[RMDB]
RNA sequence: GGGAACGACUCGAGUAGAGUCGAAAAACGAGGUACGCCUCGAAAAUAUGACCGGUGUCAUAGCCUCUAGCACACAGCGGUCGCGUGGGUUCAACUCCCCCCCUUUUCCGAGGGUAUCGGAAACCAAAAAACACAAUUUGGUUCGCCAAAUUGUGAACCUUAUAAAACAGUUCGCUGUUUUAUAAGGAAAAGAAACAACAACAACAAC
Reactivity to 2A3 in 0.01 (KOAc 150mM, MgCl2 10mM, bicine 150mM(pH8.5), 24C), signal-to-noise 7, nucleotides 027 to 156: a000c010g000a010g000g010u050a030c150g070c020c010u010c010g060a070a030a020a030u250a160u170g010a010c020c020g060g020u020g020u040c140a170u080a160g030c030c050u150c130u150a040g030c040a020c000a010c010a050g180c010g010g010u030c010g000c020g040u110g010g030g020u080u170c040a050a050c080u050c000c000c000c000c000c000c000u040u050u010u000c000c000g000a000g020g000g010u080a020u010c000g000g000a000a000a000c030c010a010a030a010a060a070a010c000a000c000a000a000u000u000u000g010g000u020u010c030g030c040c000a000a000a000u000u000g000u000g000a000a020
Reactivity to DMS in 0.01 (KOAc 150mM, MgCl2 10mM, bicine 150mM(pH8.5), 24C), signal-to-noise 2, nucleotides 027 to 156: a080c030g020a060g030g030u000a070c210g030c010c010u000c020g000a050a050a070a150u000a070u010g010a020c010c020g000g010u000g000u000c050a100u010a110g030c050c030u000c150u000a100g010c040a150c100a020c020a030g010c020g020g040u000c010g010c140g020u010g000g020g000u010u000c090a100a220c010u000c020c000c000c010c010c000c020u000u000u000u000c000c000g010a040g020g010g010u020a020u010c000g000g000a040a020a090c130c040a000a030a120a070a120a080c010a010c000a010a020u000u000u000g010g020u000u010c300g000c000c000a010a030a020u000u000g020u000g000a020a040